[RMDB]
RNA sequence: GGGAACGACUCGAGUAGAGUCGAAAAGACAAGGGUGCUGGCGUGCGUGCUGGGAGCCGUGUCAUUCCUGAUCGUGUGGAGCGAGGCCACCAUCGCAUCAGGGACCAAUCCUGAUCUCUCGCCCUUCACUAUAAAGGGGUUUCGACCCCUUUAUAGUAAAAGAAACAACAACAACAAC
Reactivity to DMS in 0.01 (KOAc 150mM, MgCl2 10mM, bicine 150mM(pH8.5), 24C), signal-to-noise 9, nucleotides 027 to 126: g010a030c030a070a050g010g000g010u000g010c010u000g010g000c020g010u010g030c270g020u010g010c020u000g010g010g000a070g010c010c000g010u000g010u000c020a190u000u000c000c000u000g000a040u000c070g010u010g020u000g000g000a140g010c030g010a040g010g000c030c030a040c050c140a050u010c080g020c220a020u000c010a020g000g000g000a110c110c140a110a120u010c050c050u010g000a060u000c050u010c010u000c030g010c010c140c030u000u000c090
Reactivity to 2A3 in 0.01 (KOAc 150mM, MgCl2 10mM, bicine 150mM(pH8.5), 24C), signal-to-noise 7, nucleotides 027 to 126: g010a010c020a020a040g080g020g040u140g120c020u020g010g020c040g060u230g060c090g100u220g020c040u010g010g040g040a030g060c000c010g030u010g020u010c030a040u050u040c000c000u040g040a090u110c080g020u030g020u040g180g020a090g030c010g010a020g020g070c020c010a030c030c030a130u160c060g030c060a010u010c000a010g020g010g020a050c040c060a020a060u090c000c010u040g050a090u030c040u010c000u010c030g020c000c010c020u080u100c040
An RNA of 177 nucleotides, treated with DMS and 2A3 and read out base by base.
The reactions ran in a buffer of 150 mM KOAc, 10 mM MgCl2 and 150 mM bicine (pH 8.5), at 24 C.
For DMS the reverse transcriptase was MarathonRT.
2A3 is a SHAPE reagent: it acylates the 2'-hydroxyl of flexible nucleotides of all four kinds.